[RMDB]
RNA sequence: GGGAACGACUCGAGUAGAGUCGAAAAACAAAAGCACUAAUGAAAAACUGCACAUUGAUGGCUAAAACGACACCAUUACGUAAGUUGGAAUAGGCACUAUUCAUAUAAACCGGUUAACAAUGUGCGAUUGCGACAACAUAUAGCCAUUACUUGCAUACAUAAGUUGAUGGUUCGCCAUCAACUUAUGAAAAGAAACAACAACAACAAC
Reactivity to DMS in 0.01 (KOAc 150mM, MgCl2 10mM, bicine 150mM(pH8.5), 24C), signal-to-noise 4, nucleotides 027 to 156: a080c040a050a050a060a140g010c030a060c060u020a100a110u010g010a110a080a090a060a060c060u010g000c030a060c060a100u000u000g020a050u000g000g000c020u000a040a070a070a070c050g010a060c030a050c040c010a050u000u000a060c050g020u000a050a090g040u000u000g020g010a090a080u000a080g020g030c060a070c070u000a100u000u010c100a110u010a090u000a040a090a080c060c020g000g020u010u000a060a100c060a020a050u010g020u010g030c030g020a110u000u000g010c030g010a140c050a060a050c050a070u000a110u000a090g020c020c010a060u000u000a050c060u000u000g000c040a130u000a130
Reactivity to 2A3 in 0.01 (KOAc 150mM, MgCl2 10mM, bicine 150mM(pH8.5), 24C), signal-to-noise 9, nucleotides 027 to 156: a000c060a020a060a010a020g050c030a010c090u140a080a100u140g120a070a040a050a060a040c070u070g010c010a020c010a060u020u060g020a030u040g030g000c030u080a050a050a040a030c050g070a020c030a040c070c030a060u100u180a060c050g030u060a030a130g020u040u040g070g020a050a050u050a080g090g020c040a000c090u050a040u060u060c070a030u090a020u090a210a070a050c050c020g050g010u070u060a100a030c040a070a030u060g010u020g010c010g020a040u030u140g060c050g050a030c030a080a000c030a050u130a010u050a150g030c020c000a010u010u020a030c020u030u020g000c010a020u040a130